[RMDB]
RNA sequence: GGGAACGACUCGAGUAGAGUCGAAAACAGUGGGUUUGGAGCCUUCUAGGGGACAGGGUGUGGCACGUGGAUGCUGGUCAGAGCCCUGCCGUCCCUGAGGACCUUGGGUGUGAGGCUUUAAUGGGCAGCAGUGCACCAAAGAAAAGCCACCGUGACAGUGGUAUUAAUCAUUCGUGAUUAAUACCACAAAAGAAACAACAACAACAAC
Reactivity to 2A3 in 0.01 (KOAc 150mM, MgCl2 10mM, bicine 150mM(pH8.5), 24C), signal-to-noise 3, nucleotides 027 to 156: c050a020g030u060g060g000g050u080u100u060g060g020a050g010c000c010u080u050c040u100a040g000g000g010g020a010c010a000g000g050g000u140g000u080g080g040c040a010c080g060u120g100g070a110u120g050c030u070g010g110u080c050a030g010a010g130c010c000c000u000g030c000c010g080u080c000c000c010u020g000a090g000g020a030c020c010u070u100g040g000g000u080g000u030g030a100g000g020c000u020u010u110a130a090u120g020g000g030c000a020g020c010a010g030u060g070c020a110c100c020a070a060a060g070a040a100a000a000g010c010c000a020c000c040g020u030g030a050c050a100
Reactivity to DMS in 0.01 (KOAc 150mM, MgCl2 10mM, bicine 150mM(pH8.5), 24C), signal-to-noise 3, nucleotides 027 to 156: c020a090g000u000g020g010g030u000u010u000g020g010a140g020c020c020u010u000c040u000a060g020g050g010g030a160c030a060g000g020g050u020g000u010g010g000c040a050c090g020u000g030g030a120u010g010c050u010g020g000u010c050a090g010a220g020c020c010c000u000g000c000c020g000u000c020c000c010u000g020a090g010g010a080c010c040u000u000g020g020g020u000g010u010g010a130g010g010c010u000u010u000a080a120u000g020g010g010c080a020g000c060a090g000u000g010c020a040c030c010a040a070a160g010a080a070a060a110g010c000c000a030c030c030g000u000g010a100c090a180